[RMDB]
Structure probing data (2A3 and DMS) for a 177-nucleotide construct. The DMS profile rests on 666 reads. 2A3 adducts were read by reverse transcription with SuperScript II with manganese. The RNA was probed in 150 mM KOAc, 10 mM MgCl2 and 150 mM bicine (pH 8.5) at 24 C.
RNA sequence: GGGAACGACUCGAGUAGAGUCGAAAACUGCUCCGGUUCGCCGGAGCAGAAAUGGAUCCAAUGGAAUCCAAAAUGGAAAUGGAGAUCCUAUAAGGGAUAACAAAACCAGGAUGUUCGCAUCCUGGAACUCACUGGAAAAGUUCGCUUUUCCAGUGAGAAAAGAAACAACAACAACAAC
Reactivity to 2A3 in 0.01 (KOAc 150mM, MgCl2 10mM, bicine 150mM(pH8.5), 24C), signal-to-noise 1, nucleotides 027 to 126: c010u000g000c000u000c000c000g020g090u020u060c180g000c060c000g000g000a000g020c030a010g000a010a000a000u030g060g050a030u020c010c000a000a090u120g060g010a060a070u040c030c010a090a040a040a190u240g050g070a130a060a040u070g030g000a070g020a210u000c000c000u000a020u060a190a030g180g000g000a030u060a150a040c070a030a030a000a150c000c000a000g000g000a000u030g000u050u030c260g010c090a000u000c000c000u000g000g000a000a000
Reactivity to DMS in 0.01 (KOAc 150mM, MgCl2 10mM, bicine 150mM(pH8.5), 24C), signal-to-noise 1, nucleotides 027 to 126: c000u000g000c000u010c000c000g020g060u000u000c210g030c000c000g000g010a010g000c000a000g000a000a080a090u020g030g000a100u000c000c020a070a080u000g000g060a080a210u010c060c000a010a000a030a110u000g000g000a030a080a180u020g000g000a070g000a080u000c000c000u000a120u000a200a120g060g020g000a040u010a020a120c140a010a020a190a170c000c000a000g000g000a020u000g010u020u010c300g030c000a000u000c000c010u000g010g000a030a070